[RMDB]
Structure probing data (2A3 and DMS) for a 177-nucleotide construct.

RNA sequence: GGGAACGACUCGAGUAGAGUCGAAAAGACGUCCGACCCGAGGAUUUCCACCCCGACAACGUCGAAACGCUGUUCAGGCGGGGGGACCGUCCCGAACCGUGAGGCUGUCGGCUCGAGCGGCAGAUGCCUACUCCCUACGGUUCGCCGUAGGGAGUAGAAAAGAAACAACAACAACAAC
Reactivity to 2A3 in 0.01 (KOAc 150mM, MgCl2 10mM, bicine 150mM(pH8.5), 24C), signal-to-noise 2, nucleotides 027 to 126: g040a020c070g090u080c000c050g040a140c090c000c010g050a040g030g000a030u050u060u050c030c030a110c070c020c020c030g000a050c030a220a060c130g090u080c000g050a070a070a000c020g030c140u100g000u050u050c020a010g000g040c040g000g010g000g000g080g060a040c010c010g100u150c000c010c020g020a020a010c010c000g010u020g040a050g050g010c000u020g010u010c000g000g000c030u040c020g030a050g030c000g050g000c020a020g020a120u150g030c000
Reactivity to DMS in 0.01 (KOAc 150mM, MgCl2 10mM, bicine 150mM(pH8.5), 24C), signal-to-noise 3, nucleotides 027 to 126: g000a080c090g000u000c010c000g000a090c030c020c010g010a060g010g010a250u000u000u000c020c020a140c070c020c000c010g020a030c030a020a050c110g000u000c090g010a110a090a070c050g020c120u010g010u000u000c070a050g000g010c020g000g000g000g010g010g000a160c040c020g000u020c010c010c000g020a030a050c030c020g020u000g010a190g010g000c010u000g020u000c000g010g000c010u010c030g010a060g010c020g000g010c060a160g010a110u010g020c130
For DMS the reverse transcriptase was MarathonRT.
2A3 adducts were read by reverse transcription with SuperScript II with manganese.
The 2A3 profile rests on 1,862 reads.